Source information:
Structure probing data (2A3) for a 177-nucleotide construct. Conditions: 150 mM KOAc, 10 mM MgCl2 and 150 mM bicine (pH 8.5), 24 C.
RNA sequence: GGGAACGACUCGAGUAGAGUCGAAAAUUUUAAUUUGAGUUUUAGGAUUGAUUUGAUGAAAGUUAAUGGCUAAUAUUAUUAGCUAAUUAUAAAUUUUCAGCAAAUCAACUCUAAAACACGAAUUAAAUCCUCUGAAUAUAUUCGUAUAUUCAGAGGAAAAAGAAACAACAACAACAAC
Reactivity to 2A3 in 0.01 (KOAc 150mM, MgCl2 10mM, bicine 150mM(pH8.5), 24C), signal-to-noise 2, nucleotides 027 to 126: u030u050u000u020a000a000u010u000u010g030a050g010u000u000u000u000a010g010g000a020u000u000g000a000u000u000u000g020a020u000g000a000a000a000g020u010u020a020a010u030g000g000c000u000a010a050u090a090u300u180a060u040u000a030g000c000u030a120a050u100u060a040u080a080a060a010u010u000u000u000c000a000g000c000a000a000a000u010c000a000a000c000u000c020u010a000a000a000a000c000a000c010g000a000a000u010u010a000a010a030